[RMDB]
RNA sequence: GGGAACGACUCGAGUAGAGUCGAAAAGAUAUGGAUAUCCAGGCGAAUAAGAAAGUCAUCGGAAACGAUGACUGGAUUCGCUGGUAUAUCCUAAGUCAAAAGCAUUGGCCGUUCGCGGCCAAUGCAACAAUUUGCUUUUGUUCGCAAAAGCAAAUUGAAAAGAAACAACAACAACAAC
Reactivity to 2A3 in 0.01 (KOAc 150mM, MgCl2 10mM, bicine 150mM(pH8.5), 24C), signal-to-noise 2, nucleotides 027 to 126: g030a010u060a040u090g000g000a010u010a000u000c010c000a040g300g250c100g040a210a130u180a300a050g080a110a100a000g010u000c000a000u020c010g010g010a040a010a000c010g000a000u000g000a010c010u000g000g000a040u110u070c030g010c000u030g000g130u100a020u000a000u000c000c000u000a030a020g010u000c030a000a050a090a150g000c000a000u000u000g000g000c050c020g090u050u150c300g010c020g150g000c050c000a000a000u010g000c020a000a010
Reactivity to DMS in 0.01 (KOAc 150mM, MgCl2 10mM, bicine 150mM(pH8.5), 24C), signal-to-noise 3, nucleotides 027 to 126: g000a030u000a290u020g010g000a000u010a000u010c010c010a040g030g030c030g020a050a070u010a200a110g010a220a230a040g000u000c000a010u000c000g010g000a080a080a080c010g000a010u000g010a010c010u000g000g000a120u000u000c030g020c010u000g000g000u000a020u000a010u000c000c000u000a040a100g010u000c020a080a110a160a120g020c000a010u010u010g010g010c000c010g030u000u010c270g020c020g030g000c010c000a000a000u000g020c020a060a090